[RMDB]
RNA sequence: GGGAACGACUCGAGUAGAGUCGAAAAGUCACGUGGUACGCCACGUGACAACCGGAAACGGAGAUGACGAUCGGGCGCAUCUUUUGAAAAAGUAAACGCCAAAGCGAGGAGUUACGACUCCUCGCAACUACUCGGCCUACUUCGGUAGGCCGAGUAGAAAAGAAACAACAACAACAAC
Reactivity to 2A3 in 0.01 (KOAc 150mM, MgCl2 10mM, bicine 150mM(pH8.5), 24C), signal-to-noise 1, nucleotides 027 to 126: g000u010c010a000c000g000u000g000g080u090a110c280g060c000c000a000c000g110u030g000a000c000a000a000c000c040g000g070a080a100a000c140g040g020a020g040a010u030g090a010c110g070a140u300c160g020g040g010c000g010c010a030u000c000u000u070u090u180g250a220a110a000a000a000g160u240a070a060a060c000g000c000c030a030a000a030g000c000g020a000g100g000a000g000u000u040a030c140g060a030c040u000c000c000u000c000g010c000a000a000